[RMDB]
RNA sequence: GGGAACGACUCGAGUAGAGUCGAAAACUGGAAAUGAUGAUGAUCUGAUCUCCCAUAUCCUUGCUGGUUUGGAUUUUGAUUAUAAUCCUGUUGUGUCCUCGAUUACGGGACGCACUGAGUCUGUUUCACGUAAUAACUCCUUCGGGAGUUAUUACGUAAAAGAAACAACAACAACAAC
Reactivity to DMS in 0.01 (KOAc 150mM, MgCl2 10mM, bicine 150mM(pH8.5), 24C), signal-to-noise 2, nucleotides 027 to 126: c050u010g010g000a060a100a050u010g000a050u000g010a080u000g000a070u010c020u000g010a050u000c050u000c080c010c020a110u000a060u000c030c030u000u010g010c120u020g020g020u000u010u020g020g000a030u000u010u000u000g010a070u000u000a080u000a100a070u010c020c040u010g000u000u010g040u000g000u000c000c010u000c070g000a190u020u010a080c180g000g000g000a000c020g020c010a030c060u010g010a120g010u000c070u000g000u000u000u000c030
Reactivity to 2A3 in 0.01 (KOAc 150mM, MgCl2 10mM, bicine 150mM(pH8.5), 24C), signal-to-noise 1, nucleotides 027 to 126: c070u080g110g040a020a100a130u110g010a020u010g000a000u050g000a020u040c010u050g020a020u000c030u020c060c000c000a040u050a050u080c020c020u060u040g040c090u080g020g100u060u100u050g050g000a010u020u030u050u050g060a020u000u150a010u020a110a070u040c010c030u050g050u130u000g010u080g000u000c000c020u010c000g150a260u050u150a040c020g010g030g010a020c020g050c000a000c020u000g040a030g040u080c080u220g070u090u030u000c020